Record summary: Structure probing data (DMS and 2A3) for a 177-nucleotide construct. The 2A3 profile rests on 1,688 reads.
[RMDB]
RNA sequence: GGGAACGACUCGAGUAGAGUCGAAAAUCGCCAACCCUCCUGAGGUGGACCAAGCAGUAUCCGCCUUUGCGCCGAUGUCCAACGGCCAGAGGGCGUGUGAAAUGGUGGAGGAAGCUGCUGCAGAGGCACUGUCUGGACGAUUCGUCGUCCAGACAGUAAAAGAAACAACAACAACAAC
Reactivity to DMS in 0.01 (KOAc 150mM, MgCl2 10mM, bicine 150mM(pH8.5), 24C), signal-to-noise 3, nucleotides 027 to 126: u020c050g010c030c030a160a220c080c010c010u000c060c090u000g000a110g020g010u010g000g010a090c120c080a110a090g000c050a030g000u000a120u000c040c000g030c000c010u010u010u000g000c130g010c010c010g020a070u010g000u000c080c080a120a120c040g020g010c000c030a090g010a090g030g000g020c040g020u020g000u000g000a060a090a050u010g030g010u010g000g040a090g000g010a060a130g010c080u000g000c010u000g010c050a140g000a140g010g000c150
Reactivity to 2A3 in 0.01 (KOAc 150mM, MgCl2 10mM, bicine 150mM(pH8.5), 24C), signal-to-noise 1, nucleotides 027 to 126: u130c000g020c010c000a070a060c030c000c010u020c010c100u070g030a030g040g060u030g010g010a020c030c020a100a010g020c060a000g070u080a070u040c010c030g000c000c000u010u040u040g020c080g030c000c000g000a020u060g100u000c010c030a170a060c050g010g000c000c010a040g000a040g010g060g010c000g000u110g000u040g000a040a080a100u150g010g020u040g010g000a080g020g040a050a030g000c000u050g020c000u040g000c030a030g030a050g060g070c060
The DMS profile rests on 2,190 reads.
The RNA was probed in 150 mM KOAc, 10 mM MgCl2 and 150 mM bicine (pH 8.5) at 24 C.
The data come from the RNA Mapping Database (RMDB), library OK2TRN.
High 2A3 reactivity points to a flexible backbone, as in loops and unpaired stretches.